[RMDB]
RNA sequence: GGGAACGACUCGAGUAGAGUCGAAAAUGGUUCUGAAAAGUCUUGCGCUCCUAUAGUCGUUCGGACCGCCUUCUAUGCUCGCGUCUUUCGAGGGGUACGUCGCCACUGGCCGCUGAAAAGUGGUGUGCACGGUAUGAUUCUUCGGAAUCAUACCGUGAAAAGAAACAACAACAACAAC
Reactivity to DMS in 0.01 (KOAc 150mM, MgCl2 10mM, bicine 150mM(pH8.5), 24C), signal-to-noise 1, nucleotides 027 to 126: u010g000g020u010u010c000u020g040a090a020a120a090g020u000c040u000u000g020c050g000c030u000c020c020u000a170u000a050g010u000c020g020u020u010c060g010g000a100c040c020g020c060c030u000u010c090u010a120u000g000c030u000c040g000c110g020u000c040u000u030u000c050g020a070g030g010g000g040u000a070c160g000u000c000g020c020c000a050c050u000g020g010c030c020g000c040u000g000a050a070a090a040g050u000g010g050u000g040u020g000